[RMDB]
RNA sequence: GGGAACGACUCGAGUAGAGUCGAAAAAAUUUCUAGGAAACUAGCAGGUGGCCAACCGCCCGGGCCACCGAUACUCCACUCCACUCCUAAGGGACUGGUUUGGAGGAACAUAACAGGGCAAAUGAAAUACUAAAACAUGAUUCGUCAUGUUUUAGUAAAAAGAAACAACAACAACAAC
Reactivity to 2A3 in 0.01 (KOAc 150mM, MgCl2 10mM, bicine 150mM(pH8.5), 24C), signal-to-noise 3, nucleotides 027 to 126: a010a020u180u190u030c030u020a040g030g010a100a080a080c010u000a020g050c100a180g060g010u000g010g000c010c010a040a040c060c130g010c000c000c010g010g010g000c000c000a000c000c000g000a000u010a010c000u000c000c000a020c010u010c000c000a000c010u000c000c000u050a110a210g100g000g000a000c000u000g000g000u020u020u000g010g000a010g000g010a010a010c020a080u280a100a010c030a060g010g000g000c000a010a010a020u080g010a010a040a020
Reactivity to DMS in 0.01 (KOAc 150mM, MgCl2 10mM, bicine 150mM(pH8.5), 24C), signal-to-noise 4, nucleotides 027 to 126: a090a090u010u000u010c010u010a030g000g000a200a130a160c020u000a020g000c280a140g020g010u000g010g020c010c010a070a060c140c150g020c000c000c000g000g010g020c010c000a000c010c010g000a050u000a070c010u010c000c000a010c000u000c000c000a010c160u000c010c000u020a090a140g030g010g010a010c070u000g020g000u000u000u000g000g000a010g000g000a050a050c130a050u000a040a060c130a020g020g030g040c020a070a060a080u010g000a120a070a100

This 177-nucleotide RNA was probed chemically with 2A3 and DMS. For DMS, 3,462 sequencing reads were counted. Source: RMDB library M2PK90, as collected in RNAgym. 2A3 adducts were read by reverse transcription with SuperScript II with manganese.